[RMDB]
RNA sequence: GGGAACGACUCGAGUAGAGUCGAAAAAAGAUAUGGAAGCCUUGUCAGUUACCGGAGUGCGUUGAAACAGCUCGGAAACGAGCUGUGGAGCAUGACGGUAACUUGGAUUUAGGCUUCCUAAGUCAAAGACUAGUAUCACGUUCGCGUGAUACUAGUCAAAAGAAACAACAACAACAAC
Reactivity to DMS in 0.01 (KOAc 150mM, MgCl2 10mM, bicine 150mM(pH8.5), 24C), signal-to-noise 2, nucleotides 027 to 126: a090a050g030a050u010a300u000g010g000a010a010g030c000c020u000u010g020u000c000a020g000u000u000a010c000c000g020g000a300g050u000g020c000g030u010u030g000a210a170a010c000a010g000c000u000c000g000g010a070a110a230c020g030a000g000c010u000g000u000g000g010a120g020c020a020u010g000a300c000g000g020u000a000a000c000u000u010g010g000a000u020u000u000a000g050g000c020u000u000c010c000u000a010a070g010u010c000a120a120a110
Reactivity to 2A3 in 0.01 (KOAc 150mM, MgCl2 10mM, bicine 150mM(pH8.5), 24C), signal-to-noise 1, nucleotides 027 to 126: a000a020g110a050u140a080u150g000g000a000a000g010c000c000u000u000g010u030c000a020g000u000u000a000c000c000g030g010a060g000u000g000c060g140u250u050g000a000a030a000c000a000g000c000u010c030g010g030a070a090a060c010g000a000g000c000u000g020u010g000g000a000g000c000a000u030g030a010c010g000g010u000a000a000c000u000u040g000g000a010u300u150u210a000g010g010c000u000u000c000c000u000a020a020g010u010c050a030a160a070
About this RNA
The record gives the reactivity of an RNA of 177 nucleotides to DMS and 2A3. It was measured as part of the RMDB library TTRDES. For DMS the reverse transcriptase was MarathonRT. Values cover nucleotides 27 to 126. The DMS profile rests on 1,997 reads. Conditions: 150 mM KOAc, 10 mM MgCl2 and 150 mM bicine (pH 8.5), 24 C.